[RMDB]
RNA sequence: GGGAACGACUCGAGUAGAGUCGAAAAUCAGGCAAUUUUCCGUCAAAUCACGGCAUCAGUAUCGUAUUUGCCUUUCUUGAACGAUGAAGAGUAUACAUUCAAUGUCUUGGUGUACACGGAUCCUAGCUACGAUAGUAGAAGAAUACCUAGCGAGUGGUGGUGUAUCGGAUUUCGAUCCGAUACACCAAAAAGAAACAACAACAACAAC
Reactivity to DMS in 0.01 (KOAc 150mM, MgCl2 10mM, bicine 150mM(pH8.5), 24C), signal-to-noise 2, nucleotides 027 to 156: u000c000a110g020g050c010a000a110u000u000u020u000c000c020g010u000c010a100a140a150u000c030a080c000g020g010c060a100u000c080a170g000u000a060u000c030g020u000a060u000u000u010g030c030c010u000u000u000c040u000u020g020a110a210c180g010a130u000g020a130a060g000a060g000u000a130u010a000c000a100u000u010c080a090a080u000g030u000c020u000u000g010g020u010g020u000a080c090a050c040g000g000a080u000c030c000u000a090g000c040u000a040c000g010a100u000a150g050u000a050g000a060a120g050a060a060u000a050c010c010u000a070g040c050g020a120g030u010g000g030
Reactivity to 2A3 in 0.01 (KOAc 150mM, MgCl2 10mM, bicine 150mM(pH8.5), 24C), signal-to-noise 3, nucleotides 027 to 156: u120c030a000g090g010c070a030a020u000u020u010u150c020c000g000u010c050a000a040a090u070c000a040c030g010g000c030a050u040c020a080g110u100a050u080c040g000u030a040u050u040u160g040c030c000u040u030u030c040u030u130g130a140a050c120g100a090u180g050a030a000g040a040g070u060a010u010a030c020a050u030u070c030a020a030u010g020u010c000u030u020g000g030u040g040u030a040c050a000c090g020g000a000u020c000c000u030a050g020c020u040a020c060g130a200u040a090g060u090a020g050a180a010g030a040a000u130a040c150c000u000a030g050c030g110a040g050u060g030g060
Background:
Source: RMDB library OK3TST, as collected in RNAgym. Structure probing data (DMS and 2A3) for a 207-nucleotide construct. The RNA was probed in 150 mM KOAc, 10 mM MgCl2 and 150 mM bicine (pH 8.5) at 24 C. For DMS, 2,297 sequencing reads were counted.